[RMDB]
RNA sequence: GGGAACGACUCGAGUAGAGUCGAAAACUGGAACUCCUAAAACAUGUUACUACAAGACAAGUCUUGAUAACAAUAUAACUUUUAGCUAAGAAUAACUAACAGCAACAUCAAAAAGAGGAUUUAUGAAGUUAAUACUAUGGUUCGCCAUAGUAUUAACAAAAGAAACAACAACAACAAC
Reactivity to DMS in 0.01 (KOAc 150mM, MgCl2 10mM, bicine 150mM(pH8.5), 24C), signal-to-noise 3, nucleotides 027 to 126: c050u010g010g000a080a090c080u000c020c030u000a080a050a110a110c110a040u000g000u010u010a010c120u020a170c030a060a040g010a080c070a120a170g020u000c010u000u010g000a200u000a020a050c010a060a120u020a060u010a130a180c040u000u000u000u000a040g000c070u010a030a070g010a120a080u000a050a050c090u010a060a050c060a020g010c060a040a050c070a050u010c070a040a070a060a140a070g000a060g010g010a100u020u000u010a070u010g020a140a150
Reactivity to 2A3 in 0.01 (KOAc 150mM, MgCl2 10mM, bicine 150mM(pH8.5), 24C), signal-to-noise 4, nucleotides 027 to 126: c030u030g050g070a030a030c030u050c020c010u040a050a030a040a030c060a050u050g000u010u020a030c060u080a080c040a040a000g000a020c050a150a090g070u010c000u030u030g020a020u030a060a000c010a070a060u110a020u030a200a080c020u070u030u060u080a010g010c020u020a050a050g060a130a250u110a110a040c050u020a010a030c010a030g060c010a010a040c010a090u100c030a030a110a030a030a000g080a050g070g010a020u060u150u070a150u200g020a100a020

Background:
An RNA of 177 nucleotides, treated with DMS and 2A3 and read out base by base. For 2A3 the reverse transcriptase was SuperScript II with manganese. The reactions ran in a buffer of 150 mM KOAc, 10 mM MgCl2 and 150 mM bicine (pH 8.5), at 24 C. For DMS the reverse transcriptase was MarathonRT.